[RMDB]
RNA sequence: GGGAACGACUCGAGUAGAGUCGAAAACGAGAUUCGUCCACGUCACCAUGAGUUAAAAUUUAACUCUCAGUAAAUUUUAACUCAUGAGUGAAUCUGCGAGUUAAAUUUUAACUCAGGGUGACGUGGAGUCUUAGGUUUAGUUCGCUAAACCUAAGACAAAAGAAACAACAACAACAAC
Reactivity to DMS in 0.01 (KOAc 150mM, MgCl2 10mM, bicine 150mM(pH8.5), 24C), signal-to-noise 3, nucleotides 027 to 126: c090g010a200g000a190u010u010c090g010u000c000c000a010c010g000u000c000a020c010c000a070u000g010a020g010u000u000a010a010a020a010u000u000u000a010a020c000u000c020u010c040a020g000u010a060a140a110u010u010u000u000a090a080c050u000c140a070u000g000a040g010u000g010a060a050u000c010u000g000c140g000a020g000u000u000a010a020a040u000u000u000u010a010a020c000u000c000a030g010g010g010u000g000a000c000g010u000g010g000a020
Reactivity to 2A3 in 0.01 (KOAc 150mM, MgCl2 10mM, bicine 150mM(pH8.5), 24C), signal-to-noise 3, nucleotides 027 to 126: c040g020a020g040a170u160u140c070g050u020c040c000a000c000g000u010c000a010c010c000a020u010g000a000g010u010u000a000a000a010a000u000u000u000a010a010c000u000c010u010c020a000g020u080a040a160a230u110u150u040u120a080a030c010u050c050a040u060g010a000g010u020g010a000a020u020c000u010g000c010g000a000g000u010u010a000a010a000u040u010u010u000a010a000c010u000c000a000g000g000g000u000g000a000c000g000u000g000g000a000